The record gives the reactivity of an RNA of 177 nucleotides to DMS and 2A3. DMS adducts were read by reverse transcription with MarathonRT.
RNA sequence: GGGAACGACUCGAGUAGAGUCGAAAAUACGGAAGCUGUAGAACCAGCCAUGAAGACAAGUGAGAAACCACCUUCUGUCUACAGAAGGCAACAAUCCUGAAUAAACCUGGAAAUCUUUGUCUGACUUACCAUCAAAUGCAUUCGUGCAUUUGAUGGUAAAAGAAACAACAACAACAAC
Reactivity to DMS in 0.01 (KOAc 150mM, MgCl2 10mM, bicine 150mM(pH8.5), 24C), signal-to-noise 2, nucleotides 027 to 126: u010a120c160g000g000a140a080g020c030u020g020u000a020g000a040a200c080c040a000g090c030c130a040u010g050a190a030g010a000c020a040a010g000u010g000a040g000a060a160a130c030c080a130c010c010u010u000c000u000g000u010c080u050a020c030a000g000a000a000g000g000c140a040a050c300a040a090u010c050c060u000g000a050a040u010a030a080a160c300c060u010g010g050a010a060a080u010c000u000u000u000g010u000c000u000g030a100c300u000u000
Reactivity to 2A3 in 0.01 (KOAc 150mM, MgCl2 10mM, bicine 150mM(pH8.5), 24C), signal-to-noise 5, nucleotides 027 to 126: u180a020c040g050g010a040a020g000c010u030g010u130a050g030a110a050c030c010a000g000c010c010a130u180g070a010a010g010a020c000a020a030g080u050g090a040g080a090a070a020c010c000a000c020c010u010u030c010u010g210u100c040u030a110c010a040g000a000a000g000g040c000a000a040c010a010a130u090c010c000u040g040a070a060u230a160a070a090c040c070u050g020g030a050a070a030u010c010u010u040u010g020u010c010u020g020a070c020u000u000
High 2A3 reactivity points to a flexible backbone, as in loops and unpaired stretches. Reactivities are rounded to 0.1 and cut off at 0 and 3.